[RMDB]
RNA sequence: GGGAACGACUCGAGUAGAGUCGAAAACAUCCGCCCGAUUAUCGAAGGCGAGACGAUCUUCAGGUCCACCAACGAUGAGAACGAAAGGCGGCAGCUCUUCGAGGAGUAUGUACUCGAACUGAAGAAGGAGCAUGUGGAACAGGAGGCUGCUCGGCGCAGGCGAGUAUAUAUUCGUAUAUACUCGCCUAAAAGAAACAACAACAACAAC
Reactivity to DMS in 0.01 (KOAc 150mM, MgCl2 10mM, bicine 150mM(pH8.5), 24C), signal-to-noise 2, nucleotides 027 to 156: c070a090u000c020c030g040c000c000c010g000a240u010u000a050u010c040g040a060a280g010g020c010g020a160g050a100c020g000a100u000c100u000u000c050a100g020g020u000c020c090a040c010c020a030a300c030g020a100u000g000a120g030a070a160c080g000a070a050a070g000g040c020g040g000c070a070g000c020u000c040u000u010c050g030a070g030g010a240g050u000a040u000g030u010a060c010u000c010g000a070a100c040u000g000a060a100g000a150a140g010g020a100g000c040a070u020g020u000g010g010a090a130c070a120g000g000a140g050g000c030u000g000c010u000c010g030g000c030g010c100
Reactivity to 2A3 in 0.01 (KOAc 150mM, MgCl2 10mM, bicine 150mM(pH8.5), 24C), signal-to-noise 4, nucleotides 027 to 156: c030a020u020c000c000g010c000c000c010g060a140u050u030a060u100c030g000a040a010g000g030c050g030a130g020a030c040g070a100u130c040u140u070c090a060g040g030u000c020c020a020c000c010a080a050c000g030a040u060g010a000g010a120a060c060g030a180a080a000g010g010c000g030g000c000a010g000c010u020c010u080u020c040g020a010g030g030a050g060u140a090u230g100u070a030c040u020c050g020a050a030c050u070g020a050a020g020a030a020g110g010a010g030c040a050u150g030u110g050g050a020a080c040a090g050g010a010g070g000c020u040g010c050u060c020g100g010c080g010c050
The record gives the reactivity of an RNA of 207 nucleotides to DMS and 2A3. For 2A3, 1,960 sequencing reads were counted. For DMS, 3,083 sequencing reads were counted. For 2A3 the reverse transcriptase was SuperScript II with manganese. High 2A3 reactivity points to a flexible backbone, as in loops and unpaired stretches. The reactions ran in a buffer of 150 mM KOAc, 10 mM MgCl2 and 150 mM bicine (pH 8.5), at 24 C.